[RMDB]
RNA sequence: GGGAACGACUCGAGUAGAGUCGAAAAGGCAAUAACGACCUAAUUCUAAGCAAGUAAUGGAGAAAUGCCAGGGUCACUAUCUAGCCAUAAUAGUGCUUGACAGUAUGAUACUAACUGAACAAUAAGUAAAAGCGCUGGUACUUCGGUACCAGCGCAACAGACGUCAUUUCUUCGGAAAUGACGUCUGAAAAGAAACAACAACAACAAC
Reactivity to 2A3 in 0.01 (KOAc 150mM, MgCl2 10mM, bicine 150mM(pH8.5), 24C), signal-to-noise 1, nucleotides 027 to 156: g020g000c030a080a110u090a100a050c050g070a050c000c000u010a040a080u090u070c030u050a040a000g000c000a020a020g020u050a080a120u070g030g000a010g040a080a090a030u100g050c070c040a080g010g010g000u020c000a000c010u020a020u040c050u090a040g000c010c040a020u050a040a020u020a040g060u040g000c000u000u020g030a000c010a000g000u010a010u070g010a000u030a040c010u020a040a000c040u000g000a010a000c010a040a040u050a080a020g000u010a000a100a150a120g000c000g000c000u010g000g020u000a020c010u060u040c130g000g010u000a010c000c020a000g000c010g000c010a000a000